[RMDB]
RNA sequence: GGGAACGACUCGAGUAGAGUCGAAAAAGUUUAGAUUUCGAUCUAAACUAGACCACUAACAGGAUGACGAGUGACUACGACGCAUCUAGUAGAAUGCGCCCAGCUGUGAGCAGUUCGCUGCUCACAACACUCUGUACUUAUUCGUAAGUACAGAGUGAAAAGAAACAACAACAACAAC
Reactivity to DMS in 0.01 (KOAc 150mM, MgCl2 10mM, bicine 150mM(pH8.5), 24C), signal-to-noise 9, nucleotides 027 to 126: a030g000u000u000u000a000g000a020u000u000u010c180g010a020u000c000u000a000a010a000c000u000a060g010a180c060c030a100c110u000a080a080c120a210g000g000a050u000g010a110c050g000a190g010u000g010a090c120u000a070c070g010a120c070g000c020a010u000c020u000a100g010u010a060g000a060a030u000g010c070g000c010c000c080a110g010c140u000g010u000g000a010g010c000a010g010u000u010c230g020c000u000g010c010u000c000a000c000a030a130
Reactivity to 2A3 in 0.01 (KOAc 150mM, MgCl2 10mM, bicine 150mM(pH8.5), 24C), signal-to-noise 9, nucleotides 027 to 126: a000g010u010u010u010a020g000a020u070u060u100c240g060a010u000c000u000a000a000a000c000u000a010g040a030c000c030a030c060u060a120a050c010a090g080g020a050u050g060a060c030g020a020g070u090g110a110c090u100a040c220g140a040c030g000c020a010u000c010u010a020g020u010a020g060a250a070u070g020c020g020c020c010c010a040g020c090u070g000u000g000a000g000c000a000g000u030u090c190g020c080u000g000c000u000c000a000c000a000a000